[RMDB]
RNA sequence: GGGAACGACUCGAGUAGAGUCGAAAACUAUUUAUAGACAGAACAGUGGAAAACGUAUAUCGCUCUCAACCUCAAACACGGAUUCUUCCAGUCGUACGAUUCCACAUGGGCGAGGCAUAAGCGGAAGGUAUUGUUUAGGAUUCGUCUUGAGCAAUGCAAAAGAAACAACAACAACAAC
Reactivity to DMS in 0.01 (KOAc 150mM, MgCl2 10mM, bicine 150mM(pH8.5), 24C), signal-to-noise 9, nucleotides 027 to 126: c020u000a050u030u020u030a070u030a070g010a100c100a080g010a080a070c110a070g010u010g000g000a050a040a070a080c070g010u010a070u020a080u010c050g010c020u000c040u010c130a090a140c060c020u020c060a060a210a100c110a070c120g000g000a050u010u010c040u010u010c050c040a080g010u020c080g010u010a050c100g000a110u010u010c010c020a040c090a110u020g010g000g010c180g010a050g010g000c060a060u020a060a080g010c050g000g000a060a040g010
Reactivity to 2A3 in 0.01 (KOAc 150mM, MgCl2 10mM, bicine 150mM(pH8.5), 24C), signal-to-noise 9, nucleotides 027 to 126: c000u010a080u040u180u060a200u080a050g100a030c070a030g120a170a040c030a050g040u070g070g040a050a060a020a010c010g030u030a040u020a020u150c030g010c020u020c000u010c030a060a090c010c010u050c030a060a070a030c050a010c080g040g010a040u080u020c020u090u030c040c030a080g070u090c030g030u090a040c040g020a030u040u010c010c000a040c040a100u050g000g000g010c020g010a010g020g000c020a050u050a150a020g020c020g030g020a030a020g090